[RMDB]
RNA sequence: GGGAACGACUCGAGUAGAGUCGAAAAACGAUCUUACCGUUCUUGCUAUUUGUCUUGCAACCUGGAUUCUUCACGUUCGCUUUGUCACUCGCGAUCAUGGCUUUCUUUUUAUUCGACAGACAAGCACUGCGCAACUUCGCCACAACAACGCACCAGCGGUGCACAACAUAUUCGUAUGUUGUGCACCAAAAGAAACAACAACAACAAC
Reactivity to 2A3 in 0.01 (KOAc 150mM, MgCl2 10mM, bicine 150mM(pH8.5), 24C), signal-to-noise 7, nucleotides 027 to 156: a000c050g030a060u050c030u060u090a060c000c030g040u040u010c020u040u070g020c020u060a080u130u080u090g070u030c020u020u050g040c020a060a050c000c020u030g030g040a060u070u040c010u070u060c050a040c100g060u030u040c030g010c040u090u070u110g080u070c050a050c080u040c050g010c010g040a060u030c040a070u070g030g000c010u030u090u010c010u050u120u050u030u060a160u100u110c040g030a030c020a050g030a010c020a060a020g000c020a030c060u060g000c030g000c020a030a050c020u060u050c020g020c020c020a040c010a080a060c010a030a020c030g010c040a040c000c010a020g000c000
Reactivity to DMS in 0.01 (KOAc 150mM, MgCl2 10mM, bicine 150mM(pH8.5), 24C), signal-to-noise 3, nucleotides 027 to 156: a090c020g020a070u010c050u000u010a090c050c040g000u000u040c030u000u000g010c010u000a120u000u000u010g020u000c010u000u010g010c030a080a100c040c030u010g010g000a130u000u000c030u000u020c040a080c050g030u000u000c030g030c020u000u010u010g020u000c040a080c060u000c030g030c050g000a080u010c040a110u010g020g000c060u010u000u000c020u000u000u000u000u000a150u080u010c040g030a130c060a080g000a060c040a070a090g010c030a100c030u000g010c030g010c050a050a070c040u000u000c040g040c010c040a060c060a070a050c020a050a040c040g020c030a080c020c010a130g010c160